[RMDB]
RNA sequence: GGGAACGACUCGAGUAGAGUCGAAAACACGCGAUCGACUGUCCAGACCCUGUGAUGUAAUUAGAGAACAAACUCCGCUGCUAGGGUCGCGGAAUGGUCAACACCAGCAGGUCAGAACCCUCGAUCGUCAGCUAGCGCAUUUCGAUGCGCUAGCUGAAAAAGAAACAACAACAACAAC
Reactivity to 2A3 in 0.01 (KOAc 150mM, MgCl2 10mM, bicine 150mM(pH8.5), 24C), signal-to-noise 3, nucleotides 027 to 126: c130a020c010g030c010g020a020u000c020g000a000c020u060g020u040c000c010a020g010a040c030c030c020u040g050u050g130a290u110g010u070a150a090u200u230a030g040a010g060a110a090c130a020a070a120c060u000c000c000g000c050u040g020c060u090a070g050g190g020u050c030g000c040g000g000a030a030u030g020g020u040c160a060a050c020a020c050c000a000g000c020a010g000g000u000c000a040g020a090a080c000c000c010u000c010g010a020u020c000g040
Reactivity to DMS in 0.01 (KOAc 150mM, MgCl2 10mM, bicine 150mM(pH8.5), 24C), signal-to-noise 1, nucleotides 027 to 126: c040a080c260g000c040g000a040u080c000g030a000c030u000g000u000c080c140a240g000a000c150c000c000u040g000u000g040a150u030g000u000a060a000u020u120a180g070a300g000a110a100c070a100a100a080c260u050c040c050g000c000u000g000c050u000a120g000g020g000u030c180g050c040g000g000a050a000u010g000g000u000c100a040a050c030a070c290c000a040g000c110a170g010g050u000c010a080g060a040a110c100c000c140u010c000g000a000u040c050g070